[RMDB]
RNA sequence: GGGAACGACUCGAGUAGAGUCGAAAAAGACACAGCACAAAAGUAUAAGCUUAAUGAUCGAGACAAAGAGAUGAUUCAAGUACAUCAAGCACGCAUCAUUGCAGGCACACAAGAACAGGUUAAAGCAAGCGGCAUGUGAGUUCGCUCACAUGCCGCUAAAAGAAACAACAACAACAAC
Reactivity to 2A3 in 0.01 (KOAc 150mM, MgCl2 10mM, bicine 150mM(pH8.5), 24C), signal-to-noise 1, nucleotides 027 to 126: a000g030a000c030a000c050a140g030c070a030c000a050a050a000a000g100u250a060u300a290a070g000c000u000u070a060a020u020g110a000u000c170g000a000g000a010c080a000a130a000g000a000g000a000u020g060a060u050u000c050a040a000g050u030a030c000a010u010c050a000a000g100c020a000c000g000c000a000u000c000a050u000u230g010c000a000g000g000c000a000c000a020c110a000a060g000a150a000c100a190g200g000u020u120a000a000a030g000c040a000